This 207-nucleotide RNA was probed chemically with DMS and 2A3. For DMS the reverse transcriptase was MarathonRT. Source: RMDB library M2RFPK, as collected in RNAgym.
RNA sequence: GGGAACGACUCGAGUAGAGUCGAAAAGGGCCGUUCACUGGAUCCGAAGCCUCUAGUAGGAUAAUAUAGGCACUCCAUACCCUACUCCGACUCAAUACGUCCCCGUCGUACAGAAUGGUAACAUAUCGAACACAACCUAACUUCGGUUAGGUUGUAACCUAAUCAAACGAUUCGUCGUUUGAUUAGGAAAAGAAACAACAACAACAAC
Reactivity to DMS in 0.01 (KOAc 150mM, MgCl2 10mM, bicine 150mM(pH8.5), 24C), signal-to-noise 2, nucleotides 027 to 156: g000g000g010c020c030g040u000u010c050a130c050u000g020g010a100u000c020c010g010a150a200g010c040c020u000c030u010a110g020u000a080g010g010a060u000a060a130u000a100u010a050g030g030c080a090c060u010c020c030a200u000a070c010c010c000u000a080c060u000c050c010g000a060c030u000c050a090a180u010a100c050g010u000c000c000c010c000g040u000c040g010u000a140c070a140g030a120a110u000g010g000u000a050a160c080a120u000a150u000c060g000a100a140c140a040c000a010a020c000c010u020a010a020c010u000u000c250g040g010u000u000a010g000g000u000u000g000u000a010a070
Reactivity to 2A3 in 0.01 (KOAc 150mM, MgCl2 10mM, bicine 150mM(pH8.5), 24C), signal-to-noise 7, nucleotides 027 to 156: g020g000g030c120c050g120u180u120c100a070c130u070g020g000a070u220c020c020g030a080a020g030c020c010u020c040u060a120g100u100a010g030g040a040u060a240a090u170a130u100a110g030g000c060a020c050u010c010c000a040u070a100c010c000c000u010a030c020u030c040c020g030a010c010u010c020a050a100u070a140c010g020u030c010c000c000c010g050u070c020g000u050a060c030a070g070a070a110u100g060g030u080a060a010c030a060u110a120u150c060g040a130a010c020a000c000a080a000c000c000u000a000a000c000u030u040c100g070g000u000u000a000g000g000u000u000g000u000a000a000